[RMDB]
RNA sequence: GGGAACGACUCGAGUAGAGUCGAAAAGCUGCCUGGCUCAGCUCUUUGGGUGACUUUUGUUCUGUCUCAUGUGACCCAUCAAGAUUCACACAGGGCUGUGUCCCGGGCAGGGCUGGAGUCGACAUUCAGGGAGGAGAUCACUGUUCUGGAACAGAGACACUUUUAAUACCUUCGGGUAUUAAAAGUGAAAAGAAACAACAACAACAAC
Reactivity to DMS in 0.01 (KOAc 150mM, MgCl2 10mM, bicine 150mM(pH8.5), 24C), signal-to-noise 2, nucleotides 027 to 156: g000c000u000g030c000c000u000g010g000c010u010c020a010g020c020u010c010u000u000u000g030g010g070u010g030a020c110u000u000u010u010g040u010u020c080u000g010u000c020u000c250a170u000g030u020g010a060c020c040c010a100u000c040a040a020g010a040u000u010c010a050c030a100c010a100g010g010g000c010u000g000u000g010u000c030c060c010g020g020g000c040a010g010g000g030c020u000g020g010a110g010u000c010g010a090c050a130u000u000c050a070g020g010g010a060g010g000a080g010a040u010c030a080c050u000g000u000u000c060u010g000g000a070a060c020a100g000a230g000a300
Reactivity to 2A3 in 0.01 (KOAc 150mM, MgCl2 10mM, bicine 150mM(pH8.5), 24C), signal-to-noise 4, nucleotides 027 to 156: g030c010u010g010c000c010u010g010g000c000u010c010a010g010c010u010c020u220u210u110g070g010g000u020g010a020c010u030u030u030u040g040u060u050c120u100g040u020c030u040c090a190u180g190u230g130a010c020c050c000a020u030c010a010a010g020a030u000u040c010a000c000a000c020a020g000g000g010c000u000g010u010g020u110c030c020c030g000g000g000c000a010g010g020g000c010u030g030g010a030g020u050c040g040a050c030a110u090u100c060a120g010g030g010a030g010g030a030g010a020u070c040a030c080u030g030u120u040c040u070g030g050a000a060c110a030g040a030g110a060
Notes:
This 207-nucleotide RNA was probed chemically with DMS and 2A3. The 2A3 profile rests on 4,499 reads. For DMS the reverse transcriptase was MarathonRT. Source: RMDB library OK3TST, as collected in RNAgym. As a SHAPE reagent, 2A3 marks flexible, mostly unpaired nucleotides at the ribose 2'-OH.